Description
Source: RMDB library OK1LIB, as collected in RNAgym. The record gives the reactivity of an RNA of 177 nucleotides to DMS and 2A3. For 2A3, 497 sequencing reads were counted. DMS adducts were read by reverse transcription with MarathonRT. Values cover nucleotides 27 to 126. For 2A3 the reverse transcriptase was SuperScript II with manganese.
[RMDB]
RNA sequence: GGGAACGACUCGAGUAGAGUCGAAAACGAGUAUCGGAUAUAGACACAGGAUAAGCGAUGUCCCCAGCAGAAUAAGCAUCUAUUGGACAAUAGUAAAACCGGGAGACAUACUUUUGAUUAACAGCACAAUCGACUCAGCAUUCGUGCUGAGUCGAUUAAAAGAAACAACAACAACAAC
Reactivity to DMS in 0.01 (KOAc 150mM, MgCl2 10mM, bicine 150mM(pH8.5), 24C), signal-to-noise 1, nucleotides 027 to 126: c040g020a080g020u040a010u000c000g000g010a110u020a010u000a050g000a050c100a180c000a150g000g010a030u000a020a080g000c110g000a010u000g000u000c000c010c000c000a090g050c000a020g000a110a000u060a060a180g000c050a100u050c030u000a000u000u000g000g000a080c040a010a130u000a000g000u030a090a060a100a060c130c060g000g000g000a030g000a060c020a070u010a030c030u010u010u000u060g000a140u010u000a050a010c080a110g000c110a000c160
Reactivity to 2A3 in 0.01 (KOAc 150mM, MgCl2 10mM, bicine 150mM(pH8.5), 24C), signal-to-noise 1, nucleotides 027 to 126: c100g010a060g110u000a080u100c010g000g030a000u020a000u010a290g090a000c020a000c000a040g020g000a170u100a170a040g000c040g030a000u040g000u000c000c000c000c000a070g010c000a000g000a120a010u050a050a000g030c000a080u040c010u000a040u040u020g100g140a000c040a130a000u010a010g030u000a000a000a020a080c000c000g000g030g000a110g030a000c000a000u040a000c000u210u070u110u090g080a140u000u280a110a070c020a000g100c000a020c000